The record gives the reactivity of an RNA of 207 nucleotides to 2A3 and DMS. The RNA was probed in 150 mM KOAc, 10 mM MgCl2 and 150 mM bicine (pH 8.5) at 24 C. The 2A3 profile rests on 2,861 reads. Source: RMDB library OK3TST, as collected in RNAgym. The DMS profile rests on 2,887 reads.
RNA sequence: GGGAACGACUCGAGUAGAGUCGAAAAACAGAGAGGUGGUUCUUAAGCCAAUGGUGUUAUGUUCCUAGGGGGAUUAUGGGUGCCUCUACUGCAUUAUACAUGUCACCAGGGAAGCGGGGGAAAACAGGCAGUGACGGGCCUCACUCAGCUCUCAUGCCAGGAGAAAUAGAUUCGUCUAUUUCUCCUGAAAAGAAACAACAACAACAAC
Reactivity to 2A3 in 0.01 (KOAc 150mM, MgCl2 10mM, bicine 150mM(pH8.5), 24C), signal-to-noise 4, nucleotides 027 to 156: a000c060a000g040a010g000a040g090g030u050g030g030u140u060c050u140u110a090a020g020c010c010a030a070u070g050g020u030g040u110u120a080u070g030u060u040c030c010u030a040g030g010g010g000g020a010u090u080a060u270g070g030g030u050g040c000c000u050c010u040a060c060u030g050c010a030u040u100a090u170a120c050a020u060g060u080c020a010c050c010a020g050g010g030a080a030g060c040g000g010g000g000g010a000a050a040a050c030a020g020g000c000a030g010u010g060a020c030g000g000g000c010c020u000c000a030c010u040c010a010g030c010u000c000u000c020a040u100g020c050
Reactivity to DMS in 0.01 (KOAc 150mM, MgCl2 10mM, bicine 150mM(pH8.5), 24C), signal-to-noise 1, nucleotides 027 to 156: a120c040a070g000a080g000a060g000g030u010g000g010u000u000c090u000u020a080a190g020c000c060a100a130u000g040g040u010g010u030u000a080u000g020u000u000c020c000u000a110g000g020g000g000g020a110u000u010a070u000g020g000g030u000g010c040c010u000c020u000a070c030u010g020c030a030u000u010a100u020a130c050a100u000g030u000c030a090c040c030a070g000g020g020a060a070g020c060g000g000g050g020g000a080a050a040a090c090a090g030g000c030a100g010u000g020a060c110g000g000g020c010c090u000c050a040c060u010c060a070g010c020u010c050u000c030a090u000g010c060